[RMDB]
RNA sequence: GGGAACGACUCGAGUAGAGUCGAAAACUUGCGCCGCAGGCACGAGGCCGCCACCAGCAGGAGCCCCACGGCGCCGAGGCCGCAGGCGACGGCCACGACGCUGACGAGGACGGGGCUUCCGAUUAGGCCGGGCGAGGCGUCGUACGUGGCGGUCGCGAAAUAAUUCUCCAUUCGUGGAGAAUUAUUUAAAAGAAACAACAACAACAAC
Reactivity to DMS in 0.01 (KOAc 150mM, MgCl2 10mM, bicine 150mM(pH8.5), 24C), signal-to-noise 1, nucleotides 027 to 156: c030u000u010g010c010g010c040c000g040c050a150g020g050c000a030c030g000a090g030g000c000c010g030c020c030a140c010c020a170g000c020a100g020g020a060g020c000c000c020c000a190c000g020g030c010g030c000c000g040a120g010g020c020c000g020c040a100g030g020c070g030a030c010g010g050c010c010a170c000g010a040c010g050c010u000g020a080c060g010a220g000g000a120c030g030g030g050g020c000u000u000c000c020g010a290u000u000a100g040g030c040c020g060g000g020c030g000a150g030g030c020g010u000c000g020u000a030c070g000u000g030g000c030g000g050u000c030g000c030g000
Reactivity to 2A3 in 0.01 (KOAc 150mM, MgCl2 10mM, bicine 150mM(pH8.5), 24C), signal-to-noise 1, nucleotides 027 to 156: c050u070u100g000c010g000c010c000g020c030a040g020g070c000a010c010g010a010g070g010c010c010g030c010c020a040c000c010a020g020c050a020g010g000a010g000c000c000c010c000a050c010g000g020c000g000c000c010g000a030g000g000c000c000g000c030a080g120g060c030g020a030c000g000g040c000c000a010c010g040a010c010g010c000u050g000a060c130g090a160g210g040a080c140g010g000g000g050c000u070u050c010c000g030a030u000u170a110g000g000c020c010g050g020g000c070g060a160g020g030c000g160u010c010g010u010a020c040g020u010g030g000c060g010g010u080c040g000c000g010
Structure probing data (DMS and 2A3) for a 207-nucleotide construct. Reactivities are given for positions 27 through 156. The data come from the RNA Mapping Database (RMDB), library OK3TST. Reactivities are rounded to 0.1 and cut off at 0 and 3. For DMS, 2,351 sequencing reads were counted. 2A3 adducts were read by reverse transcription with SuperScript II with manganese.